[RMDB]
RNA sequence: GGGAACGACUCGAGUAGAGUCGAAAAAGUUUAGGUGUGUUAGGAACAGCUGAUGGAGGCUUUAAAAAGGUGUGUAACUGAAUCUGGUUUUUAGGAGACAAAUAAGGUUUUUCACCUCUCCGAUGGGUCACGGCCCCCAGCAUCCGUGCACAGAGGGAGCUAAUUUUAAGUUCGCUUAAAAUUAGCUAAAAGAAACAACAACAACAAC
Reactivity to 2A3 in 0.01 (KOAc 150mM, MgCl2 10mM, bicine 150mM(pH8.5), 24C), signal-to-noise 3, nucleotides 027 to 156: a010g080u110u110u150a080g000g020u020g000u010g030u060u080a030g010g020a080a040c030a070g010c030u010g020a050u100g030g030a050g030g020c000u130u180u210a090a100a020a010a010g050g000u070g010u010g010u070a070a060c010u030g020a020a060u030c040u040g060g060u170u070u030u040u140a070g020g050a020g030a030c090a020a070a040u150a070a090g020g030u040u020u000u070u180c050a020c010c000u010c010u040c020c030g030a100u110g000g040g000u040c010a010c050g050g000c000c030c000c000c000a000g000c010a010u000c020c010g030u020g000c010a000c030a040g080a050g010g050g010
Reactivity to DMS in 0.01 (KOAc 150mM, MgCl2 10mM, bicine 150mM(pH8.5), 24C), signal-to-noise 2, nucleotides 027 to 156: a130g010u010u010u000a070g000g010u000g040u000g030u000u000a130g030g010a090a120c020a080g000c040u010g010a080u000g040g010a090g020g010c050u010u000u000a020a070a060a060a050g010g020u000g010u010g010u000a040a070c040u000g000a100a080u000c050u010g010g000u000u000u000u000u000a160g030g010a080g030a050c070a010a030a060u020a080a300g000g000u000u000u000u000u000c040a060c000c010u010c020u000c020c040g000a140u000g020g020g030u010c030a040c080g030g000c030c000c000c020c030a050g000c040a170u010c050c000g000u000g010c040a060c040a070g020a120g010g020g030

An RNA of 207 nucleotides, treated with 2A3 and DMS and read out base by base. For 2A3 the reverse transcriptase was SuperScript II with manganese. 2A3 is a SHAPE reagent: it acylates the 2'-hydroxyl of flexible nucleotides of all four kinds. The RNA was probed in 150 mM KOAc, 10 mM MgCl2 and 150 mM bicine (pH 8.5) at 24 C.